Structure probing data (DMS and 2A3) for a 177-nucleotide construct. It was measured as part of the RMDB library TTRDES. For 2A3, 22,789 sequencing reads were counted. For 2A3 the reverse transcriptase was SuperScript II with manganese. The reactions ran in a buffer of 150 mM KOAc, 10 mM MgCl2 and 150 mM bicine (pH 8.5), at 24 C. For DMS the reverse transcriptase was MarathonRT. For DMS, 8,114 sequencing reads were counted.
[RMDB]
RNA sequence: GGGAACGACUCGAGUAGAGUCGAAAAGAUAUGGAGCGAUGUGGGAUUAGCUACGAUCGGAAACGAUCGAAUAGCGAUGAUCCCAGAUCGCUCCUAAGUCAAAAUCGAAGUCCUUCGGGACUUCGAACCCAUAUGAAGAGUUCGCUCUUCAUAUGGGAAAAGAAACAACAACAACAAC
Reactivity to DMS in 0.01 (KOAc 150mM, MgCl2 10mM, bicine 150mM(pH8.5), 24C), signal-to-noise 5, nucleotides 027 to 126: g010a060u000a300u000g000g000a020g020c000g010a010u010g010u010g000g010g010a020u000u000a170g010c010u000a080c010g000a000u000c000g000g000a110a090a260c000g000a000u000c000g000a100a140u010a010g010c010g010a170u000g010a020u000c010c000c000a010g000a000u000c010g000c000u000c010c000u000a000a050g020u000c030a080a090a140a140u000c010g000a010a020g010u000c000c000u000u010c270g020g020g000a010c010u000u000c000g000a010a090
Reactivity to 2A3 in 0.01 (KOAc 150mM, MgCl2 10mM, bicine 150mM(pH8.5), 24C), signal-to-noise 7, nucleotides 027 to 126: g030a020u080a030u170g000g010a010g000c010g010a010u030g080u030g300g030g010a090u130u150a060g030c000u020a020c010g010a000u000c000g010g000a080a050a040c020g000a000u010c020g050a140a300u020a020g000c030g030a070u300g060a080u030c000c000c000a000g000a000u000c000g000c010u000c000c000u000a010a000g000u000c010a000a000a000a220u050c010g000a000a000g000u010c010c000u040u090c300g050g000g000a000c000u000u000c000g010a000a000